[RMDB]
RNA sequence: GGGAACGACUCGAGUAGAGUCGAAAAUAGAAUUUCAAAGUAUUAGAAACCAAACCCCAAAAUUAAAUGUGAAGAUCAGUGUCUGUACUGAGCUGGCCCAUCUGGUGGACACAGGAUUUGCGUUAUCGACUGCAAUGUUACCCAGGAUUCACGAUUACAUUUAUCGUGGAUUCGUCCACGAUAAAUGAAAAGAAACAACAACAACAAC
Reactivity to DMS in 0.01 (KOAc 150mM, MgCl2 10mM, bicine 150mM(pH8.5), 24C), signal-to-noise 1, nucleotides 027 to 156: u010a000g010a070a180u000u000u020c020a090a100a300g030u000a080u000u010a170g010a080a050a100c030c010a040a040a100c000c010c000c080a120a090a140a140u010u000a060a040a060u010g030u000g010a100a080g000a060u010c020a040g020u000g030u010c070u000g000u000a050c050u000g000a080g000c000u010g010g010c030c020c010a080u000c030u020g010g030u030g030g010a070c030a070c050a080g020g000a060u000u000u010g020c100g030u010u010a110u000c010g010a110c030u010g000c080a030a080u000g040u000u000a080c020c010c050a250g000g000a140u000u000c050a050c020g010a080u010u000a160
Reactivity to 2A3 in 0.01 (KOAc 150mM, MgCl2 10mM, bicine 150mM(pH8.5), 24C), signal-to-noise 2, nucleotides 027 to 156: u100a020g040a000a040u030u130u040c070a070a050a000g000u020a060u300u120a050g050a040a120a050c020c010a060a000a130c020c000c000c030a000a100a060a140u100u110a010a040a050u130g030u040g080a020a000g020a020u110c040a040g020u000g070u090c070u070g100u040a080c050u010g000a010g000c030u080g020g000c020c000c000a040u070c040u020g000g010u060g020g030a020c040a000c000a040g030g080a030u010u020u120g000c010g050u110u080a080u070c000g050a050c040u050g000c070a050a040u100g020u060u080a090c000c000c000a020g000g050a060u110u010c020a010c060g110a080u000u270a050

This 207-nucleotide RNA was probed chemically with DMS and 2A3. 2A3 adducts were read by reverse transcription with SuperScript II with manganese. DMS adducts were read by reverse transcription with MarathonRT. For 2A3, 775 sequencing reads were counted. The data come from the RNA Mapping Database (RMDB), library OK3TST.